The data come from the RNA Mapping Database (RMDB), library OK2TST. This 177-nucleotide RNA was probed chemically with DMS and 2A3. The 2A3 profile rests on 7,306 reads. For DMS the reverse transcriptase was MarathonRT. For 2A3 the reverse transcriptase was SuperScript II with manganese.
RNA sequence: GGGAACGACUCGAGUAGAGUCGAAAAGUUGAUGACCAGGUCGGUCAGGUCGAGGUCCUCGGUUUCUAGAUCUUCGCCCUCGCUGAGACGGGAGAGCAGCAGCAGCUCGUCGACCAGCAGCGUCAUCGUAAAACUAAGCAUUCGUGCUUAGUUUUACAAAAGAAACAACAACAACAAC
Reactivity to DMS in 0.01 (KOAc 150mM, MgCl2 10mM, bicine 150mM(pH8.5), 24C), signal-to-noise 8, nucleotides 027 to 126: g010u010u010g010a020u010g010a030c010c030a170g010g010u000c070g010g010u010c130a070g010g000u000c030g010a030g010g010u000c030c050u010c130g010g010u000u000u000c060u000a140g000a060u000c010u000u010c100g010c070c010c010u000c090g000c040u010g010a140g010a070c040g010g000g000a130g000a070g020c030a130g000c130a090g010c070a140g010c000u000c010g020u000c020g010a060c050c020a080g010c100a080g010c110g010u000c040a020u010c040
Reactivity to 2A3 in 0.01 (KOAc 150mM, MgCl2 10mM, bicine 150mM(pH8.5), 24C), signal-to-noise 4, nucleotides 027 to 126: g160u150u130g020a030u030g000a010c010c020a020g050g120u100c040g010g010u040c060a030g000g030u060c030g020a010g040g010u070c030c040u090c110g060g010u070u100u020c050u060a050g000a060u000c000u060u050c070g000c000c010c000u010c040g000c040u080g030a040g020a160c020g000g050g010a150g010a010g020c060a000g010c040a010g010c010a010g000c020u010c010g020u020c000g020a060c030c000a020g080c030a020g020c030g040u020c000a020u030c030